[RMDB]
RNA sequence: GGGAACGACUCGAGUAGAGUCGAAAAUUACAUACUGACACCGGUUGCUCAACAGGCUGUGUGGGACAAUAGAAUAACAAGGCUGUCAAUUUGAGCUUGACGGCUGCAAACCGAAUGGAGUGAAAUCGUAACCGGACUCACUUCGGUGAGUCCGGAAACAUAAGCUACAGUUCGCUGUAGCUUAUGUAAAAGAAACAACAACAACAAC
Reactivity to DMS in 0.01 (KOAc 150mM, MgCl2 10mM, bicine 150mM(pH8.5), 24C), signal-to-noise 3, nucleotides 027 to 156: u000u020a120c050a100u010a170c050u000g000a110c050a080c010c010g020g040u000u010g000c010u000c050a070a120c020a110g010g040c020u000g040u000g020u010g010g060g020a100c050a070a160u000a080g010a100a080u000a070a100c060a110a140g000g000c010u000g010u000c020a020a070u000u000u010g030a120g020c280u010u010g010a030c030g000g020c010u000g020c090a060a080a080c040c030g000a090a110u000g000g000a140g020u010g000a060a060a090u000c080g000u000a090a180c010c010g000g000a010c000u000c000a010c020u000u010c300g040g030u010g010a030g000u010c030c010g000g010a000a040
Reactivity to 2A3 in 0.01 (KOAc 150mM, MgCl2 10mM, bicine 150mM(pH8.5), 24C), signal-to-noise 3, nucleotides 027 to 156: u080u040a030c030a010u100a090c030u070g060a040c010a030c060c040g040g020u030u050g000c000u010c040a080a080c020a170g070g000c060u030g040u060g010u090g130g000g000a040c050a060a100u090a110g140a090a040u110a120a040c020a110a030g040g000c000u000g000u020c020a020a020u070u050u210g040a020g080c000u000u000g000a020c010g020g000c000u020g000c010a050a070a030c040c030g050a060a090u080g070g000a030g020u080g040a060a070a040u160c090g040u080a020a010c000c000g000g000a000c000u000c000a000c000u020u050c140g080g000u000g000a000g000u000c000c000g000g000a000a000